[RMDB]
RNA sequence: GGGAACGACUCGAGUAGAGUCGAAAAGCCCCCGUCUUCGGACGGGGGCAAUUAACGGUCGGCGCAUGCAGCUAGUCGUAAAUGCUGCUCGACCUUUUGCUAAAAUACGACCCUUCGGGGUCGUAAAUAUUGUAGUUAAGUUCGCUUAACUACAAUAAAAAGAAACAACAACAACAAC
Reactivity to DMS in 0.01 (KOAc 150mM, MgCl2 10mM, bicine 150mM(pH8.5), 24C), signal-to-noise 5, nucleotides 027 to 126: g010c010c000c000c000c010g030u000c000u010u020c230g030g010a010c010g000g010g010g020g020c000a000a010u000u000a050a080c170g020g010u000c000g010g010c110g010c050a030u010g010c120a100g020c060u000a100g010u010c170g010u010a080a130a070u010g000c000u010g010c010u010c010g000a020c010c000u000u000u010u010g000c060u000a070a070a110a140u000a010c000g010a010c000c000c000u000u010c180g020g010g000g010u000c000g000u000a000a040a090
Reactivity to 2A3 in 0.01 (KOAc 150mM, MgCl2 10mM, bicine 150mM(pH8.5), 24C), signal-to-noise 2, nucleotides 027 to 126: g010c000c040c020c010c050g030u030c040u060u060c220g150g020a010c020g040g030g010g010g060c010a000a000u030u010a060a010c030g000g020u010c010g020g000c140g010c070a040u190g000c010a010g030c030u100a060g280u210c050g030u040a000a120a040u030g000c000u040g000c030u030c010g010a010c000c000u000u110u020u020g010c000u040a110a040a040a000u060a020c000g000a000c000c000c010u000u050c210g070g000g030g000u000c000g000u000a000a010a000
The record gives the reactivity of an RNA of 177 nucleotides to DMS and 2A3.
Source: RMDB library M2PK50, as collected in RNAgym.
High 2A3 reactivity points to a flexible backbone, as in loops and unpaired stretches.
The reactions ran in a buffer of 150 mM KOAc, 10 mM MgCl2 and 150 mM bicine (pH 8.5), at 24 C.
For 2A3 the reverse transcriptase was SuperScript II with manganese.
For DMS the reverse transcriptase was MarathonRT.